[RMDB]
RNA sequence: GGGAACGACUCGAGUAGAGUCGAAAAGAAAGUUCGAGUUUCCACCCUUUUCACACACCUCACUAACACUAAACACAGAUUGAUAGAUGUUAGUAGGCGUUGUGGGAAGGGCGGCGAUGACGAGCAAUCUAUCAUUUCAGUUCGCUGAAAUGAUAGAAAAAGAAACAACAACAACAAC
Reactivity to DMS in 0.01 (KOAc 150mM, MgCl2 10mM, bicine 150mM(pH8.5), 24C), signal-to-noise 8, nucleotides 027 to 126: g000a100a070a110g010u000u000c000g020a300g000u000u000u000c000c000a050c000c000c000u000u000u000u000c010a010c000a010c010a060c000c000u000c260a000c000u000a000a010c000a020c000u000a040a200a110c080a150c250a170g010a150u020u010g000a210u000a010g000a130u000g010u000u000a000g000u000a010g000g010c020g030u020u000g030u000g000g000g000a000a010g010g010g030c020g010g000c040g010a010u000g010a120c070g000a020g010c010a110a140
Reactivity to 2A3 in 0.01 (KOAc 150mM, MgCl2 10mM, bicine 150mM(pH8.5), 24C), signal-to-noise 9, nucleotides 027 to 126: g050a020a090a000g010u010u010c010g000a020g010u000u010u010c010c000a020c000c000c000u000u010u000u010c000a000c000a000c000a010c010c000u040c050a050c020u000a000a000c000a000c000u040a020a230a010c080a030c050a160g200a300u150u210g020a010u070a030g120a130u000g000u000u000a000g000u000a000g010g000c010g060u140u110g000u010g000g000g010a000a000g000g000g000c000g000g000c010g000a020u100g090a140c010g000a000g000c010a010a030